RNA sequence: GGGAACGACUCGAGUAGAGUCGAAAAGACUUUAAAGUUUGAACUUUAUGGCGCUUUUGCUGCUGUUACAUGGUUCAAGUAAAAGUGGAUUGGGUCACCUACCAUGUGGUGAAUCUCCAACGGGUCAGGACGAACAUGGGUUCGCCUAUGUUCGUCCAAAAGAAACAACAACAACAAC
Reactivity to 2A3 in 0.01 (KOAc 150mM, MgCl2 10mM, bicine 150mM(pH8.5), 24C), signal-to-noise 3, nucleotides 027 to 126: g010a010c000u000u030u070a090a070a030g070u040u050u080g050a050a010c000u010u040u050a040u060g050g000c000g020c000u030u040u110u140g000c020u050g010c010u020g050u060u040a030c010a110u080g010g000u030u070c020a010a000g010u030a030a020a020a010g000u000g030g030a130u030u120g070g000g020u050c020a010c000c000u030a080c030c040a060u120g040u030g030g000u010g030a060a070u020c070u040c040c000a020a030c040g040g000g010u030c040a050
Reactivity to DMS in 0.01 (KOAc 150mM, MgCl2 10mM, bicine 150mM(pH8.5), 24C), signal-to-noise 2, nucleotides 027 to 126: g000a060c000u010u010u020a010a090a150g010u000u000u030g000a010a030c010u000u010u000a040u000g010g000c010g000c000u000u010u020u030g010c010u040g050c030u010g010u010u010a070c170a050u030g000g000u010u000c020a060a020g000u030a020a030a070a060g010u010g020g010a100u030u010g000g010g020u000c010a020c000c010u010a120c150c140a100u030g000u000g000g000u010g000a030a110u020c050u020c000c040a030a070c090g000g000g010u000c110a180